[RMDB]
RNA sequence: GGGAACGACUCGAGUAGAGUCGAAAAGCGCUCACUCUUAGUAACACUUCCUAGUAGGUAUUAGGUGGUAAGCCGAGCUCUUCCUCGGUCUUGUUCUGAAUGCACACAUGUCUAGGGGCUAAGGAUGCAGUGAGAUCUACUUCGGUAGAUCUCACUGAAAAGAAACAACAACAACAAC
Reactivity to DMS in 0.01 (KOAc 150mM, MgCl2 10mM, bicine 150mM(pH8.5), 24C), signal-to-noise 1, nucleotides 027 to 126: g000c100g020c030u000c060a080c030u000c060u000u000a040g030u000a040a100c120a140c090u000u010c060c040u000a040g020u030a170g020g010u010a040u000u000a040g000g010u030g000g000u000a030a020g020c030c020g000a030g010c160u010c120u000u030c160c010u010c030g010g000u000c050u000u000g020u000u000c030u010g000a080a060u000g010c060a060c100a080c150a070u000g010u000c030u010a050g000g000g000g050c040u000a050a080g000g010a140u000g000
Reactivity to 2A3 in 0.01 (KOAc 150mM, MgCl2 10mM, bicine 150mM(pH8.5), 24C), signal-to-noise 1, nucleotides 027 to 126: g100c080g040c010u060c010a030c000u080c000u060u040a030g010u080a180a030c060a040c030u180u080c010c000u010a040g000u060a010g040g030u080a050u090u020a050g000g100u050g080g020u030a010a000g000c000c000g040a020g040c050u010c070u180u110c020c000u000c000g010g000u050c020u040u070g010u090u040c020u010g120a060a010u110g030c030a020c000a000c020a210u120g010u110c020u010a040g010g010g000g030c000u020a040a000g010g000a020u050g040
Annotation:
The data come from the RNA Mapping Database (RMDB), library RFMREP. Structure probing data (DMS and 2A3) for a 177-nucleotide construct. For DMS, 1,033 sequencing reads were counted. The reactions ran in a buffer of 150 mM KOAc, 10 mM MgCl2 and 150 mM bicine (pH 8.5), at 24 C.